[RMDB]
RNA sequence: GGGAACGACUCGAGUAGAGUCGAAAAUGCGGGCCAGCGCCGGUAUCAACUCGCCGUGGACCACAGCCGGGCGGCCUUGCUGUCUGCUGCGCGAACCGAUGCCGCGGCCGGGGCCGUCAUCACCGGCGAUGAUAACGACGUUCGCGUCGUUAUCAUCAAAAGAAACAACAACAACAAC
Reactivity to 2A3 in 0.01 (KOAc 150mM, MgCl2 10mM, bicine 150mM(pH8.5), 24C), signal-to-noise 5, nucleotides 027 to 126: u100g000c000g000g010g030c010c000a050g020c020g030c030c020g010g010u040a050u090c030a040a060c010u010c020g020c020c000g050u090g070g000a050c010c010a060c070a050g020c020c010g070g030g020c040g010g010c000c030u030u100g010c040u020g010u010c030u120g000c010u030g010c010g010c010g080a110a100c070c060g070a130u070g000c020c020g010c020g040g000c010c010g000g000g010g020c020c000g050u030c030a060u100c040a040c050c000g020g020c030
Reactivity to DMS in 0.01 (KOAc 150mM, MgCl2 10mM, bicine 150mM(pH8.5), 24C), signal-to-noise 3, nucleotides 027 to 126: u010g010c040g000g000g010c020c010a080g010c060g000c040c000g000g000u010a050u010c140a110a180c070u010c040g000c040c030g000u030g000g000a080c100c040a080c100a120g040c030c080g000g000g000c030g000g000c020c010u010u020g000c140u050g010u000c000u030g020c020u030g010c060g010c050g010a050a150c190c140g010a120u030g010c010c030g030c040g010g000c040c010g000g010g010g030c000c010g000u020c050a090u010c110a130c070c030g010g030c050